Conditions: 150 mM KOAc, 10 mM MgCl2 and 150 mM bicine (pH 8.5), 24 C. The record gives the reactivity of an RNA of 177 nucleotides to DMS and 2A3. It was measured as part of the RMDB libraries RFM100 and RFMREP. For DMS the reverse transcriptase was MarathonRT.

RNA sequence: GGGAACGACUCGAGUAGAGUCGAAAAAUGGAGAGUUGUAAUGACGAGAAGUUUACAAAGUAAUAUCUGUUCCCGUAUGGGAAUUUUUUCAAGUCCCGGAGUCUAUGAAAGAUAUAUAUGGGUCAAGGUAUAUGGUAAGCUUCGGCUUACCAUAUACAAAAGAAACAACAACAACAAC
Reactivity to DMS in 0.01 (KOAc 150mM, MgCl2 10mM, bicine 150mM(pH8.5), 24C), signal-to-noise 4, nucleotides 027 to 126: a070u030g010g010a090g000a090g020u010u000g020u010a040a070u010g010a090c060g010a130g010a130a150g010u010u010u000a040c050a050a040a100g010u010a090a060u000a030u010c030u020g010u000u000c010c010c000g000u020a050u040g000g010g010a010a010u000u000u010u050u010u010c070a060a100g000u000c010c010c000g010g010a070g020u000c040u010a080u020g010a070a040a040g010a040u010a040u010a070u000a050u010g010g000g020u010c060a040a050g000
Reactivity to 2A3 in 0.01 (KOAc 150mM, MgCl2 10mM, bicine 150mM(pH8.5), 24C), signal-to-noise 3, nucleotides 027 to 126: a000u160g020g020a010g010a010g050u050u070g020u050a100a140u090g080a020c070g000a010g090a230a040g040u030u070u010a020c030a010a110a030g080u160a040a170u050a060u180c020u040g030u020u030c000c010c000g010u080a170u180g000g030g000a000a070u040u060u000u000u010u120c070a060a040g030u000c020c010c000g020g040a040g040u010c020u040a070u140g080a110a120a010g050a030u050a030u010a000u000a030u180g050g000g000u080c040a020a030g130